[RMDB]
RNA sequence: GGGAACGACUCGAGUAGAGUCGAAAAGUCCAGGAGCCGUACACCCCUCGAUCUGUCCGCCCGUCAGCGUAUAAAUUUGGUGUUGAUGACUUUGAAGCAUACCGAUUGCAAUGCGAGAACAUCAUCAGUAAUGCUCUGUCUUCGGACAGAGCAUUACAAAAGAAACAACAACAACAAC
Reactivity to DMS in 0.01 (KOAc 150mM, MgCl2 10mM, bicine 150mM(pH8.5), 24C), signal-to-noise 2, nucleotides 027 to 126: g010u020c000c000a020g020g000a150g020c100c000g020u020a130c090a170c070c040c000c000u010c000g000a030u010c080u000g000u030c020c070g000c060c010c000g000u050c030a050g020c040g030u080a100u000a030a130a090u000u030u000g000g000u020g000u070u010g010a000u000g020a100c300u000u000u020g000a090a090g030c010a050u000a070c100c160g000a050u020u030g010c070a080a040u000g010c010g030a160g020a000a030c120a060u010c120a040u010c070a090
Reactivity to 2A3 in 0.01 (KOAc 150mM, MgCl2 10mM, bicine 150mM(pH8.5), 24C), signal-to-noise 3, nucleotides 027 to 126: g040u000c000c000a010g000g130a000g020c030c030g110u070a000c030a120c010c000c000c020u020c010g070a140u050c030u000g100u050c020c020g020c030c010c030g070u090c030a000g050c020g030u080a120u080a160a130a090u140u100u150g090g000u060g010u070u050g010a020u070g000a020c020u050u000u120g060a080a020g040c000a000u020a150c060c090g200a140u060u190g010c120a040a010u020g020c000g030a090g000a150a010c010a020u100c000a020u000c010a030
The record gives the reactivity of an RNA of 177 nucleotides to DMS and 2A3. Reactivities are rounded to 0.1 and cut off at 0 and 3. For DMS the reverse transcriptase was MarathonRT. Values cover nucleotides 27 to 126. It was measured as part of the RMDB library OK1LIB. For 2A3 the reverse transcriptase was SuperScript II with manganese.